[RMDB]
RNA sequence: GGGAACGACUCGAGUAGAGUCGAAAAGAUAUGGAUCGCAUUGUCAGAAGGUUUACAACGACGAAGGAAUUCGGAAACGAAUUCCAGAGUUGUAUGCCUUCUUGGAUUUAUGCGAUCCUAAGUCAAACGGAUGCACGUGUUCGCACGUGCAUCCGAACUUGGAAUAAUAGUUCGCUAUUAUUCCAAGAAAAGAAACAACAACAACAAC
Reactivity to DMS in 0.01 (KOAc 150mM, MgCl2 10mM, bicine 150mM(pH8.5), 24C), signal-to-noise 1, nucleotides 027 to 156: g020a110u000a210u010g010g010a000u000c000g010c000a010u000u000g040u000c020a060g000a030a010g010g000u000u020u000a010c000a000a020c010g040a280c140g000a240a200g000g010a020a030u000u000c000g040g000a120a090a210c000g010a030a010u000u000c000c000a020g000a180g020u000u020g030u000a010u000g000c000c000u000u000c000u000u020g040g000a050u020u010u000a050u020g030c000g000a000u000c000c000u000a000a070g030u000c040a090a110a160c000g000g030a020u000g030c010a000c040g090u000g000u010u000c300g040c000a010c000g020u010g000c000a000u000c010c000g010a000a000
Reactivity to 2A3 in 0.01 (KOAc 150mM, MgCl2 10mM, bicine 150mM(pH8.5), 24C), signal-to-noise 4, nucleotides 027 to 156: g050a010u090a020u100g000g010a000u000c000g010c000a000u000u030g010u030c010a000g000a000a000g000g000u010u020u010a010c020a020a000c010g300a050c040g030a090a050g010g000a010a010u000u000c000g020g050a060a090a070c010g000a000a010u000u000c000c010a000g000a000g000u000u000g000u000a000u010g000c000c000u000u000c000u000u050g010g010a010u110u280u180a010u000g000c000g000a000u000c000c000u000a000a010g020u010c040a060a040a070c020g000g000a000u010g000c000a000c010g010u030g030u080u110c260g030c150a000c000g000u000g010c000a000u000c000c000g000a000a010

Structure probing data (DMS and 2A3) for a 207-nucleotide construct. Reactivities are given for positions 27 through 156. DMS adducts were read by reverse transcription with MarathonRT.